[RMDB]
RNA sequence: GGGAACGACUCGAGUAGAGUCGAAAAGAUAUAGUAAUGUAGCGGUGACAGGAUAAACGUGUAGAAAUAAUCCUCUAACAUUAAUACUUGUCGUCAGAGUAAACCAUUUUAUCCGUUAGGAGAGCUACAUAGUACUCAUGAGCAUUCAUGGGUAUUAGAGUAACAACUGCUUCGGCGGUUGUUGCUCAAAAGAAACAACAACAACAAC
Reactivity to DMS in 0.01 (KOAc 150mM, MgCl2 10mM, bicine 150mM(pH8.5), 24C), signal-to-noise 4, nucleotides 027 to 156: g000a130u000a040u010a110g020u000a090a060u010g020u010a020g000c020g020g030u020g010a100c020a100g020g000a050u000a030a030a040c140g030u000g020u000a110g010a110a100a110u000a090a140u010c150c020u010c010u000a060a030c010a120u000u000a050a170u020a110c130u000u010g020u000c100g020u000c040a060g000a070g010u000a070a080a130c060c020a090u000u000u000u000a040u000c020c000g020u010u010a160g030g020a110g010a160g020c020u000a010c020a070u000a030g010u000a010c000u000c000a000u010g000a050g040c240a160u000u000c000a010u010g000g000g010u010a000u000u000a050
Reactivity to 2A3 in 0.01 (KOAc 150mM, MgCl2 10mM, bicine 150mM(pH8.5), 24C), signal-to-noise 6, nucleotides 027 to 156: g030a020u140a020u100a160g130u120a150a020u030g000u000a000g010c030g020g080u070g040a040c040a130g020g010a020u010a020a040a030c100g030u050g030u080a050g140a050a120a050u170a030a060u110c020c020u020c030u040a060a020c010a050u120u150a100a090u140a240c090u080u120g090u130c090g030u050c050a010g010a010g020u060a030a100a050c010c000a010u000u000u020u030a020u010c010c010g020u020u050a070g040g090a090g010a020g040c000u000a000c000a010u020a000g000u000a000c000u000c000a000u010g020a010g090c150a090u210u040c000a010u040g000g000g000u000a000u010u030a020
Structure probing data (DMS and 2A3) for a 207-nucleotide construct. The RNA was probed in 150 mM KOAc, 10 mM MgCl2 and 150 mM bicine (pH 8.5) at 24 C.